Source information
Chemical mapping of a 170-nucleotide RNA with DMS and 2A3. The 2A3 profile rests on 45,410 reads. Values are in units of 0.01, from 0 to 300, in steps of 10. High 2A3 reactivity points to a flexible backbone, as in loops and unpaired stretches. For DMS the reverse transcriptase was MarathonRT. The DMS profile rests on 31,831 reads. 2A3 adducts were read by reverse transcription with SuperScript II with manganese. Source: RMDB library 15KLIB, as collected in RNAgym.

RNA sequence: GGGAACGACUCGAGUAGAGUCGAAAACUCUUUAACUAAUGAUGCCUAUUCACGAUUUUUGGGGUUGUUUAACAAGUAUAAGUACUUCUCUGGUGCUAUGGAAACAGCCGCUUAUCGUGAAGCUGCAAACCACUUCGGUUCGCCGAAGUGAAAAGAAACAACAACAACAAC
Reactivity to DMS in 0.01 (KOAc 150mM, MgCl2 10mM, bicine 150mM(pH8.5), 24C), signal-to-noise 7, nucleotides 027 to 129: c040u020c050u040u070u050a120a110c150u020a050a050u070g030a090u030g030c000c120u050a170u000u000c030a040c020g000a040u060u040u010u050u000g020g020g020g030u000u030g040u000u000u000a060a120c060a000a050g030u040a050u020a090a060g040u000a050c090u020u010c210u060c110u040g000g000u030g010c010u010a070u060g010g030a050a010a020c020a000g010c030c030g000c040u000u000a000u010c020g000u050g040a010a030g020c160u040g000c010a060a060a120c160
Reactivity to 2A3 in 0.01 (KOAc 150mM, MgCl2 10mM, bicine 150mM(pH8.5), 24C), signal-to-noise 9, nucleotides 027 to 129: c010u020c000u070u170u150a140a110c130u120a140a110u180g150a060u110g010c010c010u070a100u040u000c000a000c010g010a010u020u040u040u090u230g070g010g000g000u020u000g030u010u020u010a140a060c020a030a020g060u060a060u030a170a040g020u030a060c050u170u200c120u030c110u240g030g000u000g000c010u020a080u150g010g020a020a000a000c000a000g000c010c020g200c120u000u000a000u010c000g000u000g000a000a000g010c020u020g000c010a000a030a070c030